[RMDB]
RNA sequence: GGGAACGACUCGAGUAGAGUCGAAAAAAACCAUGUGGUAGACUUAAUGUGUCCUUUGCCAUUAAGUUGACAAGCAAAGUCAAAAGGAGGUCACUAUAAUCUAAUAUGAGGACAAAGCAGGACAGACAUGAUGGCACAUUUGAAUUUAGUCAUGGUGCGUCCUUGUUACGUUCGCGUAACAAGGACGAAAAGAAACAACAACAACAAC
Reactivity to 2A3 in 0.01 (KOAc 150mM, MgCl2 10mM, bicine 150mM(pH8.5), 24C), signal-to-noise 1, nucleotides 027 to 156: a000a010a000c010c000a030u040g000u000g100g040u040a000g000a000c010u040u100a000a040u060g010u000g060u140c090c000u110u060u160g010c000c000a000u050u050a060a000g040u000u070g010a000c010a040a020g140c000a000a130a000g000u050c020a090a090a000a000g060g020a030g040g000u000c040a060c090u020a020u030a240a060u080c060u060a020a020u010a180u100g060a040g000g010a020c030a060a060a000g060c060a110g070g000a040c000a000g020a040c000a000u220g120a040u080g070g040c000a010c000a110u000u020u260g160a190a100u030u240u070a020g020u010c000a000u000g040g000u090g020